[RMDB]
Structure probing data (2A3 and DMS) for a 177-nucleotide construct. The RNA was probed in 150 mM KOAc, 10 mM MgCl2 and 150 mM bicine (pH 8.5) at 24 C. Source: RMDB library M2PK90, as collected in RNAgym. DMS adducts were read by reverse transcription with MarathonRT. For 2A3 the reverse transcriptase was SuperScript II with manganese. The 2A3 profile rests on 1,201 reads. As a SHAPE reagent, 2A3 marks flexible, mostly unpaired nucleotides at the ribose 2'-OH.

RNA sequence: GGGAACGACUCGAGUAGAGUCGAAAAGCAACGAGCGUAAUCGCGUCUUGACUAGGGAGACUGUUGGUGACGUGAGUAUCUAUCCCAGUGUGCAUAGCGCACAAUACGCUGAUCUACAGUCAAUUAAGCAGUGUCCGAAGUUCGCUUCGGACACUGCAAAAGAAACAACAACAACAAC
Reactivity to 2A3 in 0.01 (KOAc 150mM, MgCl2 10mM, bicine 150mM(pH8.5), 24C), signal-to-noise 2, nucleotides 027 to 126: g120c000a030a040c030g040a000g010c000g030u030a000a040u040c000g000c030g010u000c010u010u050g070a170c070u050a070g070g140g000a040g020a030c040u140g100u270u190g020g020u000g010a000c000g010u000g000a010g030u060a080u000c010u010a110u050c000c000c000a000g020u010g000u010g000c030a140u120a150g050c020g000c000a000c000a000a020u130a040c070g030c040u030g000a060u030c020u150a110c010a060g010u070c060a030a050u160u040a190a000
Reactivity to DMS in 0.01 (KOAc 150mM, MgCl2 10mM, bicine 150mM(pH8.5), 24C), signal-to-noise 1, nucleotides 027 to 126: g000c070a100a040c070g000a260g000c000g020u010a030a100u000c010g000c040g010u000c000u000u040g000a140c130u000a080g000g000g020a070g000a030c000u000g000u000u010g040g000u000g000a100c070g020u000g010a120g010u000a040u000c060u020a080u010c040c000c070a110g000u000g000u000g010c040a200u000a150g020c140g040c000a040c060a030a070u000a090c070g020c010u000g000a050u000c060u000a050c040a090g030u010c090a050a060u020u010a080a210